Notes:
Chemical mapping of a 177-nucleotide RNA with 2A3 and DMS. 2A3 adducts were read by reverse transcription with SuperScript II with manganese. DMS (dimethyl sulfate) methylates the pairing face of unpaired adenines and cytosines. For DMS, 5,662 sequencing reads were counted. Source: RMDB library OK2TRN, as collected in RNAgym. For DMS the reverse transcriptase was MarathonRT.
RNA sequence: GGGAACGACUCGAGUAGAGUCGAAAAGCUGGCCGCGGUGUGCCUACAGCCUUCGCGAAGCUGGGCUGCCUGGCCGCUGCCACUCCUCCCGCCACCGGAGCUGCUCUCGCUAUGUUGGCCAGGCUGGCAUGGGUGCUGUAUUCGUACAGCACCCAUGAAAAGAAACAACAACAACAAC
Reactivity to 2A3 in 0.01 (KOAc 150mM, MgCl2 10mM, bicine 150mM(pH8.5), 24C), signal-to-noise 1, nucleotides 027 to 126: g040c130u050g020g000c030c000g000c030g020g050u120g080u180g030c000c030u020a050c020a010g000c000c000u050u100c030g020c070g130a130a030g020c010u030g000g000g000c010u040g000c050c010u010g050g010c000c000g000c000u000g010c000c000a010c010u060c010c020u000c010c020c000g040c030c000a030c000c020g090g000a050g050c020u030g020c020u020c000u040c050g000c060u050a080u190g080u080u090g030g000c020c000a030g040g000c070u040g050g050
Reactivity to DMS in 0.01 (KOAc 150mM, MgCl2 10mM, bicine 150mM(pH8.5), 24C), signal-to-noise 4, nucleotides 027 to 126: g010c140u010g010g040c020c080g030c050g010g000u000g040u010g040c020c020u010a100c050a040g010c000c010u000u000c300g000c060g010a080a110g020c040u000g000g000g010c020u000g000c050c070u000g010g000c010c010g010c010u000g000c030c040a060c060u000c050c030u000c020c010c020g000c040c030a080c070c050g000g000a070g020c050u000g010c050u010c060u000c090g000c040u000a060u010g010u000u010g010g000c010c030a070g000g000c060u000g000g000